Chemical mapping of a 207-nucleotide RNA with DMS and 2A3. For 2A3, 2,073 sequencing reads were counted. 2A3 is a SHAPE reagent: it acylates the 2'-hydroxyl of flexible nucleotides of all four kinds. Reactivities are given for positions 27 through 156. It was measured as part of the RMDB library RNAMAK. The reactions ran in a buffer of 150 mM KOAc, 10 mM MgCl2 and 150 mM bicine (pH 8.5), at 24 C.
RNA sequence: GGGAACGACUCGAGUAGAGUCGAAAAUCUCGUUCGCGAGACACAUCGGGGUCACCCAACAGCAGAAGAGCUGAUGACCGUACUGAAGCCUCCACGGUACGCAAGGCUCCUUCUGACAUGGGUGACGGAGGCACCCAACAACAGCGUUCGCGCUGAAUACUAGAAAUCUCUUCGGAGAUUUCUAGUAAAAAGAAACAACAACAACAAC
Reactivity to DMS in 0.01 (KOAc 150mM, MgCl2 10mM, bicine 150mM(pH8.5), 24C), signal-to-noise 1, nucleotides 027 to 156: u030c020u010c020g030u010u010c060g000c030g030a070g020a120c010a160c150a140u030c000g030g010g000g000u000c000a070c090c000c020a100a120c030a110g050c020a050g000a050a020g000a070g030c020u010g020a100u010g000a060c300c000g010u000a050c000u010g000a050a010g000c000c030u000c010c010a300c000g020g000u010a020c000g000c030a000a030g030g010c000u010c030c020u000u000c000u000g000a070c030a290u000g020g030g030u000g020a030c050g000g040a040g050g060c020a250c000c020c000a050a130c070a140a210c040a000g000c010g020u000u030c210g040c020g010c010u000g000a180a070
Reactivity to 2A3 in 0.01 (KOAc 150mM, MgCl2 10mM, bicine 150mM(pH8.5), 24C), signal-to-noise 3, nucleotides 027 to 156: u030c000u000c010g050u050u050c240g010c030g140a020g050a020c050a010c000a230u090c060g060g000g000g000u040c020a020c010c020c060a230a040c100a080g010c010a000g000a030a000g000a010g000c000u020g020a150u030g000a030c010c000g000u000a000c000u020g100a270a070g030c010c010u010c010c000a010c010g000g000u000a000c000g020c040a040a060g010g000c000u060c050c040u020u000c000u010g050a060c030a130u180g020g000g000u010g000a000c010g010g010a000g010g000c000a030c000c030c020a060a120c030a010a070c000a030g040c000g080u130u120c240g020c010g040c160u030g050a060a090